RNA sequence: GGGAACGACUCGAGUAGAGUCGAAAAAUCACGAGAUGACAGUCGAACAUGACACCGGCCCUGGUAAAUGUUCGUAUGGCCAGGACAGUGUGUCUUAUGCGUCACUCUGUAUAGUGGCCGAUACAGAGUAACUACUUUAUUUCGAUAAAGUAGUUACAAAAGAAACAACAACAACAAC
Reactivity to 2A3 in 0.01 (KOAc 150mM, MgCl2 10mM, bicine 150mM(pH8.5), 24C), signal-to-noise 9, nucleotides 027 to 126: a000u060c030a020c040g080a050g020a090u080g040a030c020a030g060u080c020g010a030a010c010a020u050g010a000c000a010c080c010g070g010c010c000c010u030g000g010u030a080a090a050u020g020u040u060c020g030u070a080u100g060g000c000c000a020g060g040a010c010a040g060u070g000u000g010u080c010u060u190a200u150g030c050g020u000c010a000c000u020c000u000g010u010a040u010a030g120u040g020g010c010c000g010a010u030a050c040a000g120a000
Reactivity to DMS in 0.01 (KOAc 150mM, MgCl2 10mM, bicine 150mM(pH8.5), 24C), signal-to-noise 8, nucleotides 027 to 126: a070u020c060a090c110g000a080g000a110u010g000a060c090a080g010u020c020g000a090a050c120a000u020g010a110c090a040c020c010g000g000c030c020c020u000g000g020u000a040a140a080u000g000u010u010c110g020u030a040u020g000g000c010c000a020g000g010a040c010a030g010u040g000u000g000u000c000u000u030a050u020g020c130g010u010c020a050c010u000c010u000g000u010a030u010a070g020u010g010g010c020c010g010a070u020a040c070a070g010a160
The record gives the reactivity of an RNA of 177 nucleotides to 2A3 and DMS. DMS adducts were read by reverse transcription with MarathonRT. Values cover nucleotides 27 to 126. The DMS profile rests on 33,388 reads. Conditions: 150 mM KOAc, 10 mM MgCl2 and 150 mM bicine (pH 8.5), 24 C.